[RMDB]
RNA sequence: GGGAACGACUCGAGUAGAGUCGAAAAACUAACCACACCGGCUGUACUUGUUGAUAACGCGGCCAUCACGGACUACUGUCAAGCUGAGAGGUUCAGUAAACUGUACUCGUCCCGCGCAAGAAGGCACCACAGAUACCUUAUUCGUAAGGUAUCUGUGAAAAGAAACAACAACAACAAC
Reactivity to 2A3 in 0.01 (KOAc 150mM, MgCl2 10mM, bicine 150mM(pH8.5), 24C), signal-to-noise 2, nucleotides 027 to 126: a000c020u050a040a000c000c010a030c010a020c040c030g050g010c030u020g020u070a060c020u110u130g050u090u100g130a090u090a170a030c040g010c000g030g030c010c020a050u090c030a000c050g070g020a040c030u090a020c010u090g030u060c030a060a080g020c050u040g030a040g020a050g170g000u080u050c010a000g000u060a030a060a070c020u020g030u080a030c010u020c050g060u040c010c010c000g010c000g000c020a060a020g050a010a050g130g010c040a010c020
Reactivity to DMS in 0.01 (KOAc 150mM, MgCl2 10mM, bicine 150mM(pH8.5), 24C), signal-to-noise 6, nucleotides 027 to 126: a070c130u020a100a120c050c020a110c070a090c050c050g000g000c040u000g020u010a070c150u000u000g020u020u030g000a110u020a050a110c090g000c020g000g000c060c080a040u010c070a040c040g000g010a090c080u000a060c040u020g010u010c070a040a070g020c020u000g000a090g000a110g010g000u020u000c040a050g000u020a060a070a070c040u000g000u000a040c070u000c040g020u000c050c000c010g010c060g000c090a080a080g010a060a050g000g010c050a100c150